[RMDB]
RNA sequence: GGGAACGACUCGAGUAGAGUCGAAAAGAUAUGGAACCCGUACUAUGGCGAAGAACUCGGAAACGAGGGAGCCACGUACCGGGUUCCUAAGUCAAAACUCACGUCGAUGUUCGCAUCGACGUGAGAACCAAUGGAAUAUGUUCGCAUAUUCCAUUGGAAAAGAAACAACAACAACAAC
Reactivity to DMS in 0.01 (KOAc 150mM, MgCl2 10mM, bicine 150mM(pH8.5), 24C), signal-to-noise 5, nucleotides 027 to 126: g000a050u010a300u010g000g010a020a020c000c000c030g010u000a020c030u000a210u000g000g020c010g000a110a190g000a130a190c010u000c020g000g000a110a110a190c010g000a020g000g000g000a090g000c000c000a020c300g010u000a010c050c130g040g010g000u000u000c000c000u000a000a100g000u010c040a100a060a070a150c000u000c000a000c000g000u000c000g010a010u000g010u000u010c180g020c000a010u000c000g010a010c000g000u000g010a010g010a040a150
Reactivity to 2A3 in 0.01 (KOAc 150mM, MgCl2 10mM, bicine 150mM(pH8.5), 24C), signal-to-noise 4, nucleotides 027 to 126: g010a020u070a020u100g000g010a000a000c000c000c000g020u010a000c020u090a090u190g000g010c030g200a300a040g030a100a060c000u010c000g000g030a080a050a050c010g000a010g000g020g010a000g000c010c030a000c030g010u010a030c090c150g000g000g000u000u000c000c000u010a010a000g000u000c010a010a030a080a100c000u000c000a000c000g000u000c010g000a000u020g030u110u140c300g030c160a000u000c000g000a000c000g010u000g000a000g000a000a010

Background:
This 177-nucleotide RNA was probed chemically with DMS and 2A3. The RNA was probed in 150 mM KOAc, 10 mM MgCl2 and 150 mM bicine (pH 8.5) at 24 C. As a SHAPE reagent, 2A3 marks flexible, mostly unpaired nucleotides at the ribose 2'-OH. For DMS the reverse transcriptase was MarathonRT. It was measured as part of the RMDB library TTRDEL.